[RMDB]
Overview: This 177-nucleotide RNA was probed chemically with DMS and 2A3. Source: RMDB library OK2TRN, as collected in RNAgym. Conditions: 150 mM KOAc, 10 mM MgCl2 and 150 mM bicine (pH 8.5), 24 C. For DMS, 25,733 sequencing reads were counted. 2A3 adducts were read by reverse transcription with SuperScript II with manganese. Values cover nucleotides 27 to 126.
RNA sequence: GGGAACGACUCGAGUAGAGUCGAAAAGCAAGGCCAGUUGAGGCGGGCUGCAACCUGCUCGAUAUGGGUCGAUUUACCCGUGCCGUGAUAGCCCGAAACCAUCACGCGGCGGUUAUAGGCAAAGCCAACCGCUAAAUUAGUUCGCUAAUUUAGCGGUAAAAGAAACAACAACAACAAC
Reactivity to DMS in 0.01 (KOAc 150mM, MgCl2 10mM, bicine 150mM(pH8.5), 24C), signal-to-noise 9, nucleotides 027 to 126: g010c080a130a120g010g010c020c010a100g010u000u000g010a150g010g010c020g010g000g010c030u010g010c270a110a170c020c010u000g010c010u000c020g010a090u010a080u010g020g010g020u000c040g000a180u000u000u000a080c050c000c010g020u000g020c050c010g010u000g010a040u000a080g000c020c030c150g000a090a100a180c070c040a030u010c040a060c030g010c110g010g010c020g010g010u000u000a070u000a090g010g010c030a080a080a110g000c060c060a130
Reactivity to 2A3 in 0.01 (KOAc 150mM, MgCl2 10mM, bicine 150mM(pH8.5), 24C), signal-to-noise 8, nucleotides 027 to 126: g040c030a030a120g040g010c010c030a030g000u030u070g070a070g050g110c010g000g020g000c050u190g030c020a030a070c010c000u010g000c010u020c020g030a020u030a140u260g100g010g020u010c030g010a020u060u050u170a110c010c010c010g020u070g100c000c010g020u020g040a050u060a050g000c010c030c040g030a080a030a020c050c030a050u070c010a010c040g010c070g030g000c030g000g000u060u040a100u100a100g030g000c000a090a060a010g040c010c010a020